[RMDB]
RNA sequence: GGGAACGACUCGAGUAGAGUCGAAAAAUCAACGGCAGCAAGCCGAUCACCAUCCUGACCUAUUACAAUUCGCCGCUCGUUGCCAAUGUGCUGGCCGCGAUGCAGGCCAUGCUGGCACAGGUCGGCAGCGUCAGUACUAGUUCGCUAGUACUGACGCAAAAGAAACAACAACAACAAC
Reactivity to 2A3 in 0.01 (KOAc 150mM, MgCl2 10mM, bicine 150mM(pH8.5), 24C), signal-to-noise 3, nucleotides 027 to 126: a000u140c070a050a040c040g010g000c000a040g050c040a140a110g020c050c000g020a030u050c020a030c030c000a040u030c000c020u050g080a070c020c000u090a120u220u200a160c100a140a130u120u200c070g010c010c000g030c010u020c050g120u090u070g000c010c000a040a120u200g040u120g120c010u000g030g000c000c020g000c040g080a070u300g040c080a020g000g010c000c000a050u160g000c000u010g010g000c000a020c030a030g070g050u070c010g020g000c000a000
Reactivity to DMS in 0.01 (KOAc 150mM, MgCl2 10mM, bicine 150mM(pH8.5), 24C), signal-to-noise 2, nucleotides 027 to 126: a100u010c110a060a140c020g000g030c010a050g060c190a190a170g010c000c030g000a100u000c080a070c030c060a140u000c000c050u000g000a090c080c020u000a080u020u030a030c230a070a110u000u000c110g040c020c000g000c010u010c060g000u060u000g000c010c020a080a130u000g000u040g030c040u000g030g030c000c100g000c000g030a100u000g040c080a080g040g010c020c020a010u000g010c020u000g010g030c030a040c030a030g010g000u000c030g060g030c000a100